[RMDB]
RNA sequence: GGGAACGACUCGAGUAGAGUCGAAAAAGGUGUCGCCAUUACAACAACCAUGGCAGAUAAGAAAAAUGUGAUGCGUCAAGAUAUUGCUGAGGAAGGAACAGACCGUGCCUUGCUCUUUAAAAAUGUUCCUGAAAAAGAAAAUCACUUUAUCAAGGUAAUAAUAGCUCAUCUUCGGAUGAGCUAUUAUAAAAGAAACAACAACAACAAC
Reactivity to DMS in 0.01 (KOAc 150mM, MgCl2 10mM, bicine 150mM(pH8.5), 24C), signal-to-noise 2, nucleotides 027 to 156: a080g030g030u010g020u010c080g020c050c070a060u000u000a170c070a070a100c070a070a150c040c090a140u010g000g030c040a160g010a040u000a060a110g000a000a090a070a130a110u010g000u000g010a080u010g010c100g000u010c050a130a120g000a100u000a050u010u000g000c070u000g000a070g010g040a130a000g000g000a020a060c010a120g000a130c140c080g010u000g010c010c010u000u000g010c050u000c010u020u000u010a030a040a050a030a070u000g030u010u000c000c000u000g000a070a040a050a070a130g000a050a060a110a060u010c040a070c040u000u010u010a060u020c040a090a020g020g000u010a120
Reactivity to 2A3 in 0.01 (KOAc 150mM, MgCl2 10mM, bicine 150mM(pH8.5), 24C), signal-to-noise 2, nucleotides 027 to 156: a000g070g030u060g020u070c050g030c020c010a010u090u130a040c150a300a050c090a130a020c050c050a040u030g000g000c060a000g020a110u140a050a110g140a000a100a010a020a010u150g040u010g050a040u040g020c030g010u030c030a050a000g030a050u070a050u090u130g050c080u100g020a010g070g070a010a010g010g030a010a030c010a030g030a080c000c100g030u010g000c000c030u020u070g030c000u000c000u020u180u070a060a080a040a060a030u010g010u050u000c010c000u000g100a080a030a000a000a000g110a000a060a010a000u030c000a020c000u100u040u090a090u230c090a040a020g070g050u070a030

Chemical mapping of a 207-nucleotide RNA with DMS and 2A3.
2A3 is a SHAPE reagent: it acylates the 2'-hydroxyl of flexible nucleotides of all four kinds.
DMS adducts were read by reverse transcription with MarathonRT.
Reactivities are given for positions 27 through 156.
It was measured as part of the RMDB library OK3TST.
For 2A3, 758 sequencing reads were counted.